[RMDB]
RNA sequence: GGGAACGACUCGAGUAGAGUCGAAAACGAGUGAGCCCGAGGUCCCUAGAAAAACCCCUAGGCAGGCGCCAUCGCGCCCGUACCGCAAACCGACACAGGUGGGUGGGUAGAACAUACCGAGGCGAUCAAAAUCCAUAGUAUUCGUACUAUGGAUUUUAAAAGAAACAACAACAACAAC
Reactivity to 2A3 in 0.01 (KOAc 150mM, MgCl2 10mM, bicine 150mM(pH8.5), 24C), signal-to-noise 9, nucleotides 027 to 126: c030g010a030g080u090g040a020g040c000c000c000g000a030g020g030u050c000c010c000u020a040g110a060a090a030a050a060c010c000c000c010u030a040g010g020c030a020g020g010c020g000c020c040a140u120c080g010c000g010c010c000c000g030u050a060c000c010g060c090a040a030a020c030c010g140a100c070a020c040a180g030g000u040g010g010g040u110g020g020g000u020a040g030a080a040c040a070u140a060c010c030g010a040g030g000c010g000a020u110c060
Reactivity to DMS in 0.01 (KOAc 150mM, MgCl2 10mM, bicine 150mM(pH8.5), 24C), signal-to-noise 9, nucleotides 027 to 126: c110g000a100g020u010g010a240g010c020c010c020g000a140g020g010u000c030c000c010u010a070g000a060a060a060a100a120c050c040c030c020u010a050g000g000c110a080g000g000c020g020c020c140a060u020c140g000c030g010c010c010c030g020u010a060c020c010g000c070a040a070a040c030c010g010a140c170a110c170a090g000g010u010g000g000g010u010g000g000g010u000a030g000a070a070c140a110u020a190c040c010g000a080g000g000c020g010a090u020c090